[RMDB]
RNA sequence: GGGAACGACUCGAGUAGAGUCGAAAAGAAGGGAAAGGAGACCCAUGGACAGUCUCCAGAGGUUCCUAAGGCCUCGCUCGCGCCUGCCGGGAGGCAGAAUGUCCCGGUUGUCCAUGUAAGAAGAAGAACCUACCUACGCAUUCGUGCGUAGGUAGGUAAAAGAAACAACAACAACAAC
Reactivity to DMS in 0.01 (KOAc 150mM, MgCl2 10mM, bicine 150mM(pH8.5), 24C), signal-to-noise 2, nucleotides 027 to 126: g020a060a090g010g000g040a050a130a200g000g000a030g000a040c030c300c070a070u010g020g020a040c000a150g000u010c020u000c040c020a120g000a030g000g030u000u000c060c190u020a150a160g000g000c000c000u000c020g020c110u000c010g030c070g020c030c000u020g000c020c010g000g030g000a070g010g030c010a100g000a060a040u000g010u030c000c000c030g050g030u000u010g000u000c000c000a070u000g000u070a050a120g020a200a070g040a140a060g000a080
Reactivity to 2A3 in 0.01 (KOAc 150mM, MgCl2 10mM, bicine 150mM(pH8.5), 24C), signal-to-noise 2, nucleotides 027 to 126: g090a060a040g060g030g050a040a100a090g010g010a000g000a000c000c020c080a000u010g020g000a000c000a000g010u010c000u030c000c020a000g020a010g020g010u000u190c020c020u070a160a000g110g000c000c000u000c020g040c000u040c000g190c050g020c010c000u000g040c000c000g000g010g000a000g000g040c020a020g110a160a030u110g080u010c000c030c020g000g000u010u040g000u000c010c020a000u000g090u090a070a280g030a090a020g040a060a000g050a090
This 177-nucleotide RNA was probed chemically with DMS and 2A3. It was measured as part of the RMDB library OK1LIB. The DMS profile rests on 2,020 reads.